[RMDB]
RNA sequence: GGGAACGACUCGAGUAGAGUCGAAAAGGCUUCGGCUUUCUCCCGGGUGGGUAGGUCCACAUGGUGGGGUAGCUGGUGCAGGAAGCAGCGGAUGACCUGCACGUGGGCGGGGCCGAGGUGGCCGGCGAUCGAUUAGCAUGUUCGCAUGCUAAUCGAUAAAAGAAACAACAACAACAAC
Reactivity to 2A3 in 0.01 (KOAc 150mM, MgCl2 10mM, bicine 150mM(pH8.5), 24C), signal-to-noise 1, nucleotides 027 to 126: g100g000c030u060u060c170g070g010c040u000u100u020c030u060c010c000c000g010g020g030u230g030g000g000u040a100g060g130u090c030c000a010c060a130u190g110g010u090g010g000g000g000u000a000g070c100u100g050g000u030g010c010a020g050g050a090a030g100c090a020g080c110g110g000a090u090g040a080c010c000u000g040c010a030c040g040u120g000g000g000c070g020g000g030g000c020c000g000a050g050g000u020g000g070c000c030g010g070c010g030
Reactivity to DMS in 0.01 (KOAc 150mM, MgCl2 10mM, bicine 150mM(pH8.5), 24C), signal-to-noise 2, nucleotides 027 to 126: g000g010c020u000u010c080g030g000c030u000u000u000c050u010c020c020c020g010g000g040u010g000g040g010u010a060g010g000u010c030c030a050c060a090u000g020g030u010g000g000g060g000u000a100g030c110u000g000g030u000g030c030a060g030g000a130a160g000c060a110g020c060g040g010a110u010g000a170c010c000u000g010c000a040c010g000u000g010g000g010c060g000g000g000g010c040c010g000a040g010g040u000g000g010c020c020g030g000c130g000
Conditions: 150 mM KOAc, 10 mM MgCl2 and 150 mM bicine (pH 8.5), 24 C.
This 177-nucleotide RNA was probed chemically with 2A3 and DMS.
The 2A3 profile rests on 1,211 reads.
For DMS the reverse transcriptase was MarathonRT.